[RMDB]
RNA sequence: GGGAACGACUCGAGUAGAGUCGAAAAGAUAUGGACCUAUGGUAGCGAUAAGCUCCAUUCGGAAACGAAUGUGAGCUUUUGACGCUGAGAGUAGGUCCUAAGUCAAAGGAGUUGUUCGCAACUCCAACUAGUACACCAGGUUCGCCUGGUGUACUAGAAAAGAAACAACAACAACAAC
Reactivity to 2A3 in 0.01 (KOAc 150mM, MgCl2 10mM, bicine 150mM(pH8.5), 24C), signal-to-noise 3, nucleotides 027 to 126: g010a010u040a040u130g000g010a010c000c010u030a010u090g130g140u250a020g000c020g060a140u030a300a000g010c000u000c000c000a000u000u010c010g010g030a060a060a050c010g000a000a000u040g260u190g060a000g020c000u010u010u030u060g020a020c010g000c010u040g090a140g020a010g170u010a000g000g020u000c000c000u000a020a000g000u000c050a040a040a250g010g010a000g000u000u030g060u090u250c300g070c170a010a000c000u000c000c010a000a000
Reactivity to DMS in 0.01 (KOAc 150mM, MgCl2 10mM, bicine 150mM(pH8.5), 24C), signal-to-noise 4, nucleotides 027 to 126: g010a040u000a300u010g000g000a030c000c000u000a000u010g000g020u020a020g010c000g030a150u000a030a010g000c000u000c000c000a010u000u000c000g010g010a060a060a140c000g010a020a000u000g010u010g020a010g020c000u000u000u000u000g020a220c040g040c000u000g000a130g010a220g010u000a010g010g010u000c000c010u000a010a100g000u000c030a090a130a160g010g000a020g010u000u000g010u010u010c250g000c020a000a030c010u000c000c000a070a080
This 177-nucleotide RNA was probed chemically with 2A3 and DMS. For DMS, 5,812 sequencing reads were counted. High 2A3 reactivity points to a flexible backbone, as in loops and unpaired stretches. For 2A3, 5,729 sequencing reads were counted. Reactivities are given for positions 27 through 126. The reactions ran in a buffer of 150 mM KOAc, 10 mM MgCl2 and 150 mM bicine (pH 8.5), at 24 C.